[RMDB]
RNA sequence: GGGAACGACUCGAGUAGAGUCGAAAAUAUGUGGUGAUAAUUCUGCUAAGUUUUGGGAAGAGGCAUUCUAUAGAGAUCUCUAUAGUUCGCCUACCACUUUGCAGGCUGUCGGUUCAUGCGUUGUAUGAUAACCCAGUCUUCGGACUGGGUAAAAGAAACAACAACAACAAC
Reactivity to DMS in 0.01 (KOAc 150mM, MgCl2 10mM, bicine 150mM(pH8.5), 24C), signal-to-noise 2, nucleotides 027 to 129: u020a060u020g000u030g010g010u020g000a060u050a040a070u000u060c000u020g000c040u040a030a040g030u020u050u050u040g000g000g000a200a090g020a000g050g080c000a070u000u040c020u010a010u030a020g020a060g070a220u080c300u000c000u040a070u010a040g040u010u000c080g010c000c030u030a040c010c000a040c090u070u000u000g020c060a060g010g040c220u000g040u020c040g070g000u000u060c000a090u040g050c110g060u000u000g030u080a060u000g000a080u020a120
Reactivity to 2A3 in 0.01 (KOAc 150mM, MgCl2 10mM, bicine 150mM(pH8.5), 24C), signal-to-noise 3, nucleotides 027 to 129: u260a040u100g040u000g040g180u100g060a040u020a070a100u080u090c000u000g040c000u040a030a030g000u000u060u180u300g020g030g000a180a200g060a040g060g000c010a040u050u000c000u000a010u000a030g000a020g030a200u180c050u000c000u250a000u000a040g000u000u010c030g000c000c020u040a010c030c000a000c000u040u000u030g000c010a010g030g000c100u030g090u040c020g010g150u020u070c090a010u020g020c010g070u000u000g010u010a100u100g090a170u000a110
The data come from the RNA Mapping Database (RMDB), library 15KLIB. The record gives the reactivity of an RNA of 170 nucleotides to DMS and 2A3. For 2A3, 1,987 sequencing reads were counted. Conditions: 150 mM KOAc, 10 mM MgCl2 and 150 mM bicine (pH 8.5), 24 C. For DMS the reverse transcriptase was MarathonRT.